The record gives the reactivity of an RNA of 177 nucleotides to 2A3 and DMS.
DMS adducts were read by reverse transcription with MarathonRT.
RNA sequence: GGGAACGACUCGAGUAGAGUCGAAAACAACGGUGCCUUUGGUCAGUGUUAGCGGGUCUUUUUGUGCUCAUGAAUGAACCAUCAUCUCUUCCUUCCACCUCGCAACAAGUUGAAAGGCGGCUUGUUGCUCCACAGAGUGAUUCGUCACUCUGUGGAGAAAAGAAACAACAACAACAAC
Reactivity to 2A3 in 0.01 (KOAc 150mM, MgCl2 10mM, bicine 150mM(pH8.5), 24C), signal-to-noise 3, nucleotides 027 to 126: c020a030a000c030g040g050u050g030c000c000u070u040u040g060g010u060c040a060g040u020g040u180u110a030g030c080g000g110g000u040c040u060u150u040u080u130g120u120g010c010u010c050a050u130g080a100a060u060g020a060a050c010c010a030u070c010a060u000c050u010c000u080u030c010c000u090u000c020c010a070c030c040u060c040g020c000a000a000c010a010a010g010u030u030g120a140a080a050g110g030c010g010g000c010u010u000g010u000u000g000
Reactivity to DMS in 0.01 (KOAc 150mM, MgCl2 10mM, bicine 150mM(pH8.5), 24C), signal-to-noise 3, nucleotides 027 to 126: c090a070a090c130g030g010u000g010c030c020u010u000u000g030g010u000c040a060g020u000g010u000u000a080g020c130g000g010g010u000c020u010u010u000u000u010g000u000g010c030u000c020a050u000g010a090a080u010g000a070a060c080c020a050u000c050a070u000c020u000c040u010u000c020c020u000u010c050c030a100c110c100u010c100g010c020a010a010c000a000a020g000u000u000g020a070a040a090g010g010c080g010g000c020u000u000g010u000u010g010